[RMDB]
RNA sequence: GGGAACGACUCGAGUAGAGUCGAAAAAAGAGGAGACUGCUGGACCAAACGCCCGAGCCGGGAUGGGCCGCAUACCGAGCGAAGGAUACCGGUAAGGGGAGAGGAGGAAUCCCGAGGGGAUCGCCCAAAAGACCAUUCUUCGGAAUGGUCAAAAGAAACAACAACAACAAC
Reactivity to DMS in 0.01 (KOAc 150mM, MgCl2 10mM, bicine 150mM(pH8.5), 24C), signal-to-noise 7, nucleotides 027 to 129: a060a080g030a060g020g020a040g030a040c000u020g000c050u040g020g010a000c030c060a050a100a210c160g000c010c010c010g020a160g030c000c010g030g000g010a000u040g010g050g000c070c000g000c040a070u040a120c070c070g020a010g040c090g020a070a130g060g010a100u040a060c090c030g020g030u000a050a110g030g010g020g030a040g030a010g000g000a040g000g000a070a050u010c050c000c040g020a010g020g030g010g010a040u070c100g020c030c020c000a040a040a100a100
Reactivity to 2A3 in 0.01 (KOAc 150mM, MgCl2 10mM, bicine 150mM(pH8.5), 24C), signal-to-noise 6, nucleotides 027 to 129: a000a000g100a020g020g010a030g010a060c030u030g040c030u030g080g010a040c020c010a140a090a060c070g010c010c000c010g030a020g030c040c000g000g010g010a010u030g020g010g010c010c000g010c010a030u070a090c020c050g020a020g000c040g010a030a010g020g020a030u040a070c020c010g000g020u060a060a060g020g000g010g000a020g020a010g010g000a010g000g000a020a020u040c000c000c000g010a030g010g010g000g000a050u050c030g080c010c000c020a030a110a010a010